[RMDB]
RNA sequence: GGGAACGACUCGAGUAGAGUCGAAAAAUCGAUCGGCGCUAGCUAAUGCGCAUAUAUUAAUCGGCGCCGUAAUGCAUAUCGUAUAUAGCUACGGCAUGCUAUAAUGCAUAUGCGCUAUACGCGUAGCUGGGCUACUUAAAUUCGUUUAAGUAGCCCAAAAAGAAACAACAACAACAAC
Reactivity to 2A3 in 0.01 (KOAc 150mM, MgCl2 10mM, bicine 150mM(pH8.5), 24C), signal-to-noise 3, nucleotides 027 to 126: a010u100c050g040a010u070c040g030g000c040g040c030u030a050g010c040u110a140a060u100g010c030g000c040a000u030a010u010a000u030u100a070a060u080c060g030g000c010g060c030c010g000u010a020a070u070g010c020a040u030a030u080c100g110u010a040u010a020u000a210g000c010u010a010c020g130g050c050a040u150g020c010u030a060u050a160a080u060g030c010a010u010a000u020g000c000g000c020u020a030u010a050c050g000c020g060u020a010g050c030
Reactivity to DMS in 0.01 (KOAc 150mM, MgCl2 10mM, bicine 150mM(pH8.5), 24C), signal-to-noise 5, nucleotides 027 to 126: a070u000c080g000a110u000c060g010g010c070g030c020u000a100g010c070u010a080a150u000g020c030g020c030a050u010a020u010a080u010u010a100a100u000c150g020g020c010g020c000c020g020u000a050a060u010g000c010a040u000a020u000c180g000u000a300u000a050u000a030g010c020u010a080c060g010g020c100a030u010g030c010u000a060u000a050a050u010g010c140a040u000a010u000g010c020g000c070u000a130u000a090c120g010c030g020u000a020g010c070